[RMDB]
RNA sequence: GGGAACGACUCGAGUAGAGUCGAAAACGCCGCUCGCCGCUCCUCAUGGAUGCCGCAGGCUCGUCACGGACGCACGCGUAACCCCCUCCUCGUUACGCCAAGCUGUUCGGACCACCAAGCCACGGCACGCCGUAUUAAAUUUCGAUUUAAUACGGCGAAAAGAAACAACAACAACAAC
Reactivity to 2A3 in 0.01 (KOAc 150mM, MgCl2 10mM, bicine 150mM(pH8.5), 24C), signal-to-noise 9, nucleotides 027 to 126: c030g010c010c010g000c020u020c020g020c020c010g020c020u020c000c010u070c040a080u120g080g010a050u060g010c020c000g050c090a140g010g010c030u020c030g010u010c020a130c200g010g000a000c010g010c020a010c030g010c000g010u020a030a030c000c010c000c020c020u050c010c010u050c030g020u010u020a010c010g010c010c010a150a090g000c050u110g020u020u010c010g000g010a020c010c010a040c030c050a060a000g000c000c000a020c010g010g000c010a010
Reactivity to DMS in 0.01 (KOAc 150mM, MgCl2 10mM, bicine 150mM(pH8.5), 24C), signal-to-noise 6, nucleotides 027 to 126: c070g000c050c010g000c010u010c040g010c060c010g010c010u010c020c020u010c100a090u000g020g010a130u010g010c020c020g020c070a100g010g000c000u000c170g000u000c030a120c020g010g010a020c010g010c020a110c270g010c010g010u000a020a020c020c060c030c040c020u010c080c030u000c080g000u000u000a010c010g000c020c130a110a120g000c010u020g030u000u010c000g010g000a050c030c190a090c100c090a060a060g010c000c000a270c030g010g000c020a100
Record summary:
The record gives the reactivity of an RNA of 177 nucleotides to 2A3 and DMS. Conditions: 150 mM KOAc, 10 mM MgCl2 and 150 mM bicine (pH 8.5), 24 C. For 2A3 the reverse transcriptase was SuperScript II with manganese. For DMS the reverse transcriptase was MarathonRT.